[RMDB]
RNA sequence: GGGAACGACUCGAGUAGAGUCGAAAAUCAUGGAUAAUGCUAUUAAUGUUGGUGGUACAGGAUUACAGUAUGCCGCCAUUACUGCACCUUAUGUAGUUCUCACUGGCUUAGGUGAGUCCUUUAAGAAACGGAGGUACCUUCGGGUACCUCAAAAGAAACAACAACAACAAC
Reactivity to DMS in 0.01 (KOAc 150mM, MgCl2 10mM, bicine 150mM(pH8.5), 24C), signal-to-noise 2, nucleotides 027 to 129: u040c030a000u040g000g010a110u050a030a010u070g020c040u060a000u010u090a030a060u000g010u020u000g050g000u010g070g020u020a010c000a110g000g000a250u030u060a000c120a070g030u020a030u010g000c080c060g030c160c020a000u000u060a020c000u040g000c050a040c090c010u000u050a080u070g130u060a130g000u020u070c070u040c000a030c000u000g080g040c000u030u060a070g020g010u000g060a030g000u030c020c010u000u000u000a100a080g040a120a080a080c190g020
Reactivity to 2A3 in 0.01 (KOAc 150mM, MgCl2 10mM, bicine 150mM(pH8.5), 24C), signal-to-noise 6, nucleotides 027 to 129: u090c010a040u050g000g060a040u050a230a020u090g030c020u060a080u160u070a120a040u150g080u080u060g050g020u000g020g010u030a050c000a170g200g020a300u140u110a070c020a040g080u030a020u020g010c000c000g000c020c000a040u030u040a030c040u000g010c020a020c020c010u040u030a080u060g120u080a040g020u050u000c000u000c000a000c010u040g110g070c070u130u130a020g030g020u040g010a010g000u020c020c020u080u130u110a110a030g070a110a070a000c060g090
The record gives the reactivity of an RNA of 170 nucleotides to DMS and 2A3. DMS (dimethyl sulfate) methylates the pairing face of unpaired adenines and cytosines. The 2A3 profile rests on 8,855 reads. Conditions: 150 mM KOAc, 10 mM MgCl2 and 150 mM bicine (pH 8.5), 24 C.